[RMDB]
RNA sequence: GGGAACGACUCGAGUAGAGUCGAAAAGAUAUGGAUGGUACCAGGGAGCGAAUCGGAAACGAUGUCGCGAAGAACUGGGCCAUCCUAAGUCAAAAGCGUUACUAUACCUUCGGGUAUAGUAACGCAAGAUUCCGAUGGUGUUCGCACCAUCGGAAUCAAAAGAAACAACAACAACAAC
Reactivity to DMS in 0.01 (KOAc 150mM, MgCl2 10mM, bicine 150mM(pH8.5), 24C), signal-to-noise 1, nucleotides 027 to 126: g010a040u000a270u000g000g020a020u000g000g040u000a080c000c000a010g010g030g010a170g000c020g000a100a030u000c030g000g020a070a160a120c020g000a000u000g010u000c010g000c000g030a030a030g010a140a150c020u000g000g030g020c030c000a010u050c000c000u000a000a030g010u010c010a080a050a180a110g020c010g000u000u000a010c000u000a020u010a010c000c000u000u000c230g020g000g020u000a000u000a010g000u000a010a000c010g000c010a000a010
Reactivity to 2A3 in 0.01 (KOAc 150mM, MgCl2 10mM, bicine 150mM(pH8.5), 24C), signal-to-noise 1, nucleotides 027 to 126: g010a020u040a040u120g000g000a000u000g020g090u140a300c010c010a000g000g090g030a030g010c030g010a010a020u010c010g000g040a060a030a020c040g000a040u100g300u300c000g000c000g040a050a010g010a000a000c000u000g010g010g010c000c000a000u000c000c000u000a010a000g000u000c010a100a100a000a030g000c010g000u020u000a000c000u010a010u000a010c000c030u020u160c300g010g000g020u010a010u010a000g000u000a010a000c010g040c000a000a000
The record gives the reactivity of an RNA of 177 nucleotides to DMS and 2A3. DMS adducts were read by reverse transcription with MarathonRT. For DMS, 1,001 sequencing reads were counted.